[RMDB]
RNA sequence: GGGAACGACUCGAGUAGAGUCGAAAACGAGUGCAAUAAAGACGCGGUUGCCGAUCGGUAUGGAUGCCACCGCGACGGCUCAAUCACACAAGUGCCAACGAUAACGAGGCGCUCGCUAUUGCUGCGUAAAAGCGACGAUCGUUCGCGAUCGUCGCAACUCUUGGAAUAUGUUCGCAUAUUCCAAGAGAAAAGAAACAACAACAACAAC
Reactivity to 2A3 in 0.01 (KOAc 150mM, MgCl2 10mM, bicine 150mM(pH8.5), 24C), signal-to-noise 4, nucleotides 027 to 156: c060g010a030g010u080g030c030a060a110u070a200a190a030g070a030c010g000c000g000g020u010u020g000c020c040g100a080u030c020g020g130u260a130u190g140g050a030u080g010c000c020a000c000c010g010c000g010a030c020g010g000c000u050c060a040a110u140c030a040c020a020c020a160a080g020u030g020c020c010a080a080c110g080a130u090a230a050c090g010a080g050g000c000g010c020u030c030g020c010u050a080u150u180g050c070u060g010c010g050u050a030a050a100a080g000c000g000a000c000g000a000u000c000g030u070u060c180g010c000g070a010u000c000g000u000c000g000c010a000a010
Reactivity to DMS in 0.01 (KOAc 150mM, MgCl2 10mM, bicine 150mM(pH8.5), 24C), signal-to-noise 1, nucleotides 027 to 156: c030g010a060g060u000g000c020a130a120u000a080a040a160g010a120c020g020c030g000g010u000u000g040c000c010g030a040u000c030g020g020u000a130u000g040g000a200u000g000c020c060a030c010c000g010c020g040a020c070g030g010c030u000c000a110a100u000c050a120c050a050c050a050a120g190u010g000c030c010a080a130c020g000a150u000a090a100c090g000a230g030g020c010g010c000u000c050g020c040u000a080u000u020g010c010u010g000c030g000u000a040a100a060a090g030c000g000a030c000g000a010u010c000g030u010u020c300g020c000g010a000u000c000g000u000c000g000c020a010a070
About this RNA: Structure probing data (2A3 and DMS) for a 207-nucleotide construct. The reactions ran in a buffer of 150 mM KOAc, 10 mM MgCl2 and 150 mM bicine (pH 8.5), at 24 C. The DMS profile rests on 2,436 reads. For 2A3 the reverse transcriptase was SuperScript II with manganese. For 2A3, 3,239 sequencing reads were counted.